[RMDB]
RNA sequence: GGGAACGACUCGAGUAGAGUCGAAAAGGCCAAAUCGUGCAGCAUUCUGGCAGAGAUGGCUGUGGAGUGAGUUCUCAAGACCAAUUUUUGACAUUCUUCUGGCUUCCAGUUGUAACGAUAACCGAUGGAAUGUAUAUGAGUUCGCUCAUAUACAUUCAAAAGAAACAACAACAACAAC
Reactivity to 2A3 in 0.01 (KOAc 150mM, MgCl2 10mM, bicine 150mM(pH8.5), 24C), signal-to-noise 7, nucleotides 027 to 126: g050g000c020c010a020a060a030u070c070g030u070g050c020a030g010c010a070u200u060c040u140g050g010c020a010g010a000g000a070u070g050g000c020u040g080u090g040g010a050g020u070g010a070g020u080u030c040u030c050a040a040g060a060c020c040a070a070u060u080u040u110u150g040a040c020a040u050u030c000u070u000c010u030g050g000c000u060u030c020c000a030g010u050u040g040u100a100a020c030g010a040u040a080a070c030c030g020a020u120g150
Reactivity to DMS in 0.01 (KOAc 150mM, MgCl2 10mM, bicine 150mM(pH8.5), 24C), signal-to-noise 9, nucleotides 027 to 126: g010g000c020c040a050a080a130u000c050g010u010g010c040a070g010c140a120u010u000c070u010g010g010c090a120g000a080g010a130u000g010g010c020u000g020u000g010g010a060g020u000g000a100g010u000u000c040u000c060a080a110g010a080c080c060a040a050u000u000u000u000u010g010a110c120a100u000u000c050u000u010c060u000g010g010c050u000u010c040c030a050g010u000u000g010u000a060a070c080g000a080u010a100a120c060c040g000a140u010g010